[RMDB]
This 177-nucleotide RNA was probed chemically with 2A3 and DMS. For DMS the reverse transcriptase was MarathonRT. Conditions: 150 mM KOAc, 10 mM MgCl2 and 150 mM bicine (pH 8.5), 24 C.
RNA sequence: GGGAACGACUCGAGUAGAGUCGAAAAUCUGUAACCGGAGGGCAAAACACAAGAUGAGCGAUUGACGAGCUCGUUCGUUUAACGAAUAGUGUAGGGGAGAGUAAGAAGCCAUCCCAUCAGUUAGUAAAUCUUCCAGCAAGUUCGCUUGCUGGAAGAUAAAAGAAACAACAACAACAAC
Reactivity to 2A3 in 0.01 (KOAc 150mM, MgCl2 10mM, bicine 150mM(pH8.5), 24C), signal-to-noise 2, nucleotides 027 to 126: u060c030u010g070u010a060a020c000c000g000g020a050g000g000g050c040a050a090a090a000c030a000c030a100a120g040a160u060g010a010g060c070g000a030u040u060g120a050c060g010a010g030c010u000c030g000u050u010c010g000u040u050u060a160a050c010g020a050a070u060a110g040u050g100u130a010g030g000g000g000a000g000a010g000u030a080a000g080a020a010g030c000c000a040u020c030c020c010a070u070c010a030g060u030u150a020g020u050a050a060
Reactivity to DMS in 0.01 (KOAc 150mM, MgCl2 10mM, bicine 150mM(pH8.5), 24C), signal-to-noise 4, nucleotides 027 to 126: u010c070u010g010u020a080a070c090c050g000g000a080g000g010g010c070a070a060a060a060c080a100c100a150a090g010a050u000g010a020g000c000g010a130u020u020g010a110c120g010a150g010c040u010c030g010u000u000c000g000u000u030u010a090a080c060g000a040a010u010a070g000u000g000u000a060g000g000g000g000a050g000a110g010u000a050a080g000a080a080g010c040c030a060u020c000c000c010a110u020c110a070g010u010u020a110g010u030a030a080